[RMDB]
The record gives the reactivity of an RNA of 177 nucleotides to 2A3 and DMS. 2A3 adducts were read by reverse transcription with SuperScript II with manganese. Reactivities are rounded to 0.1 and cut off at 0 and 3. It was measured as part of the RMDB library M2PK90. Values cover nucleotides 27 to 126.
RNA sequence: GGGAACGACUCGAGUAGAGUCGAAAAACAAAGAGCAACACGCGCAGUCACGCAGGCAGAUGGAAUAAUCUGCCAAGAAUAACUAAUGGACGGUAGACUCCGCGAACCACCGACCAAUAGAAAAAAAGAAGAAGUUAAGAUUCGUCUUAACUUCUUCAAAAGAAACAACAACAACAAC
Reactivity to 2A3 in 0.01 (KOAc 150mM, MgCl2 10mM, bicine 150mM(pH8.5), 24C), signal-to-noise 3, nucleotides 027 to 126: a000c060a010a090a010g070a020g050c030a010a050c020a010c090g020c010g000c010a010g030u030c020a010c070g050c060a050g000g000c000a000g000a020u040g030g080a180a020u110a090a090u050c000u010g010c030c000a000a000g000a010a070u210a050a030c050u050a050a040u030g030g010a030c000g000g020u010a010g030a030c010u010c040c040g020c030g050a050a060c020c010a010c010c020g030a010c010c000a030a030u120a050g150a040a110a020a050a010a000a000
Reactivity to DMS in 0.01 (KOAc 150mM, MgCl2 10mM, bicine 150mM(pH8.5), 24C), signal-to-noise 3, nucleotides 027 to 126: a080c070a100a060a060g000a140g030c030a040a050c070a120c090g000c040g000c120a060g000u000c060a070c100g020c120a110g010g000c010a020g010a010u000g010g030a140a090u000a080a080u000c020u010g000c000c000a060a040g010a100a080u030a090a120c070u020a040a090u000g000g000a100c040g010g010u010a050g000a060c060u020c100c030g010c050g000a050a110c080c060a060c010c040g000a080c010c050a020a080u010a040g010a000a000a080a090a080a060a100